[RMDB]
RNA sequence: GGGAACGACUCGAGUAGAGUCGAAAAACAACACUACGCUUUAGCAGCUUAAAAAACUGUAUAAAGCCCUUUCUUCUCAGCCUCCUCUCUUAGGACGAGAAAUAAAGAAAGGUCAAAAAAAGAGAAAAACAUGAACAUCAAGCUUGACGAUGACAUGCCAUACUGCUACGUUCGCGUAGCAGUAUGGAAAAGAAACAACAACAACAAC
Reactivity to 2A3 in 0.01 (KOAc 150mM, MgCl2 10mM, bicine 150mM(pH8.5), 24C), signal-to-noise 4, nucleotides 027 to 156: a000c060a060a020c030a010c110u250a060c100g000c000u000u000u010a000g000c000a000g000c000u050u040a040a030a030a060a010a010c160u180g000u050a300u030a240a000a010g000c000c000c000u010u000u000c010u020u000c010u000c000a020g010c000c010u010c020c010u020c000u010c010u030u050a010g000g020a020c000g000a000g040a010a070a010u270a050a160a010g010a000a000a010g030g020u040c030a020a040a020a000a010a070a010g060a010g010a060a080a020a010a020c010a000u030g050a090a040c000a000u030c040a080a080g140c110u190u200g060a080c070g010a010u010g020a010c010a020u020g010